[RMDB]
RNA sequence: GGGAACGACUCGAGUAGAGUCGAAAAGAUAUGGACGUUGACCCUCGACAACUAGCAAUGAUGUCGGAAACGAUUGAGCUAGCUAAUCGAGCAACGUCCUAAGUCAAAAUCACCGUUCGCGGUGAAACUCAUCGCAAUUCUUCGGAAUUGCGAUGAGAAAAGAAACAACAACAACAAC
Reactivity to DMS in 0.01 (KOAc 150mM, MgCl2 10mM, bicine 150mM(pH8.5), 24C), signal-to-noise 1, nucleotides 027 to 126: g000a040u030a300u000g000g000a000c010g000u000u000g020a230c160c300c010u000c000g000a000c030a130a070c000u000a000g000c000a140a120u000g010a190u000g000u000c000g000g030a140a070a200c040g000a000u000u000g000a050g000c000u000a000g000c010u070a120a270u000c000g020a000g000c000a000a010c000g000u000c000c000u000a010a040g000u040c030a150a100a090a050u000c000a020c010c020g090u000u000c270g000c010g000g010u000g030a050a080a090
Reactivity to 2A3 in 0.01 (KOAc 150mM, MgCl2 10mM, bicine 150mM(pH8.5), 24C), signal-to-noise 2, nucleotides 027 to 126: g060a020u060a080u160g000g010a000c000g030u030u020g130a210c080c100c050u000c000g000a040c030a160a030c000u020a010g040c010a100a300u270g040a030u160g070u030c000g050g020a080a120a000c000g000a000u030u190g030a010g000c000u020a000g000c050u160a220a160u070c000g000a000g060c000a000a000c030g000u030c000c000u000a000a000g000u020c050a020a040a020a300u010c000a000c000c000g060u110u140c300g000c040g090g050u020g040a020a010a010